[RMDB]
RNA sequence: GGGAACGACUCGAGUAGAGUCGAAAACAUAUUUUAGAGGGAAGACCUCUUAUUGGAGCCACACUCCCAUGUAUGAUUGAGCAAUUCAAAGUGUUUUGGCUGAAACCCUACGAACAAUGUCCGCAGUGUUCAAAUGCAAAGCAACCAGGUGGGAAACCAUUCGUGUCAGUGGCAGUCAAGAAACAUAUUGUUAGUGCAUGGCCGAACGCAUCCCGAAUAAGCUGGACUAUCGGGGAUGGAAUCCCAUACAUUGGAUCAAGGACAGAAGCUGCACUUUCGAGUGCAGCAAAAGAAACAACAACAACAAC
Reactivity to DMS in 0.01 (KOAc 150mM, MgCl2 10mM, bicine 150mM(pH8.5), 24C), signal-to-noise 1, nucleotides 027 to 266: c000a070u000a020u000u010u020u000a040g050a060g020g030g010a250a100g000a170c000c000u020c000u000u000a010u000u000g010g000a100g000c030c070a040c130a210c140u000c040c010c140a110u000g000u010a090u030g010a140u000u000g050a060g000c150a090a060u000u020c040a020a100a090g020u010g010u010u040u020u000g010g000c040u000g020a100a110a100c090c030c000u000a100c150g000a040a020c090a160a050u000g000u000c070c100g000c070a150g040u010g040u010u010c000a050a150a040u000g030c100a020a050a150g060c090a080a160c110c040a040g000g040u000g000g040g020a090a090a230c060c000a150u030u000c040g000u020g000u000c010a020g000u030g000g000c020a030g020u000c070a100a040g000a090a040a070c180a130u020a130u000u000g000u000u000a080g010u030g000c060a090u030g000g030c030c030g030a030a040c100g000c150a060u000c000c000c050g020a060a050u020a080a050g000c050u020g000g030a050c040u000a040u010c070g000g000g000g000a000u010g000g000a030a300u000c000c000c030a070u010a050c080a090u000u000g030g010a090u000c080a060a160g000g030a040c050a080g000a150a120